[RMDB]
RNA sequence: GGGAACGACUCGAGUAGAGUCGAAAAACGGGCAGUGGCGAUGGCAACGCGGCAGCCGCAGGGUCGACUUCUUCGCAGCCGCAACAGACGGGUUACGGGCAAAGAGGGGCACUCGUUCUGUUGGAAGAGUGCAGGAUCCUUUCGAGGAUCCUGCACUAAAAGAAACAACAACAACAAC
Reactivity to 2A3 in 0.01 (KOAc 150mM, MgCl2 10mM, bicine 150mM(pH8.5), 24C), signal-to-noise 1, nucleotides 027 to 126: a000c020g000g030g000c020a050g080u050g030g050c020g060a080u060g000g000c150a000a020c070g040c020g100g000c000a000g000c020c050g090c070a020g010g050g110u000c000g040a020c000u190u120c010u040u020c070g020c050a050g000c010c020g020c040a010a010c030a020g050a020c010g000g030g000u150u040a060c020g000g010g010c070a020a040a020g100a050g020g010g050g000c010a010c050u010c030g000u100u030c000u000g000u010u000g020g000a080a020g040